[RMDB]
RNA sequence: GGGAACGACUCGAGUAGAGUCGAAAACGGCAAAGAAGCAAACUUGACCACCAAGGAUAAAAGAGAUCUUAUCCAAGGAUGCAAAAGAUAAUCUCACUUUUGACACCCACUGAUCUCGAACUUAAAGAAAACCGAGACUACUUCGGUAGUCUCGGAAUCGAGUUACAAGGUUCGCCUUGUAACUCGAAAAAGAAACAACAACAACAAC
Reactivity to 2A3 in 0.01 (KOAc 150mM, MgCl2 10mM, bicine 150mM(pH8.5), 24C), signal-to-noise 3, nucleotides 027 to 156: c050g050g000c040a030a050a030g100a110a030g130c060a070a080a100c060u130u120g040a150c000c000a010c020c000a080a040g010g010a020u050a060a060a010a080g010a000g000a000u000c000u040u060a010u000c050c040a030a070g030g000a020u050g010c000a030a050a000a000g010a040u110a140a190u180c050u050c090a020c030u000u000u060u030g100a100c020a090c000c030c020a050c080u050g010a010u000c020u000c020g010a080a040c020u180u170a150a040a010g070a030a090a030a010c000c000g000a000g000a010c000u000a000c000u050u060c100g030g000u010a000g000u000c000u010c010g000g000a000a000
Reactivity to DMS in 0.01 (KOAc 150mM, MgCl2 10mM, bicine 150mM(pH8.5), 24C), signal-to-noise 1, nucleotides 027 to 156: c110g010g070c080a000a070a150g080a180a120g040c070a050a000a110c000u020u000g000a300c030c040a020c070c020a100a300g030g000a150u000a040a050a030a130g000a070g040a020u000c000u000u000a050u000c070c020a180a200g020g050a020u000g060c040a000a000a030a000g000a130u020a030a130u020c200u000c130a220c110u000u000u000u000g000a170c000a000c000c020c000a200c250u000g000a050u000c020u000c000g000a030a210c070u000u020a090a120a120g000a000a080a160a200c020c000g020a000g000a030c000u000a020c000u000u000c300g100g040u000a000g000u000c000u000c000g000g030a020a000